Background:
The record gives the reactivity of an RNA of 177 nucleotides to DMS. For DMS, 2,214 sequencing reads were counted. Values cover nucleotides 27 to 126. Conditions: 150 mM KOAc, 10 mM MgCl2 and 150 mM bicine (pH 8.5), 24 C. DMS adducts were read by reverse transcription with MarathonRT.

[RMDB]
RNA sequence: GGGAACGACUCGAGUAGAGUCGAAAAGAUAUGGAAAUCGAAAGGGAGCAACAGCGUCUUAUAUACCGCUGAUCGGAAACGAUCAUGUAUAUAAGACGACAUGCUCCUGAGUAGAUUUCCUAAGUCAUCAAAGAUGAAACUUCGGUUUCAUCUUUGAAAAAGAAACAACAACAACAAC
Reactivity to DMS in 0.01 (KOAc 150mM, MgCl2 10mM, bicine 150mM(pH8.5), 24C), signal-to-noise 2, nucleotides 027 to 126: g020a040u010a300u020g000g010a010a000a010u000c000g000a120a200a300g000g000g010a020g030c000a040a100c200a220g000c010g000u000c000u010u000a000u000a010u010a000c000c000g000c000u010g000a000u000c000g000g000a090a100a200c010g010a000u000c010a010u000g000u000a000u000a000u010a000a000g000a010c010g000a020c040a150u010g010c000u000c000c000u000g010a030g020u000a060g010a040u000u000u000c000c020u010a000a080g000u010c030a160
Values are in units of 0.01, from 0 to 300, in steps of 10.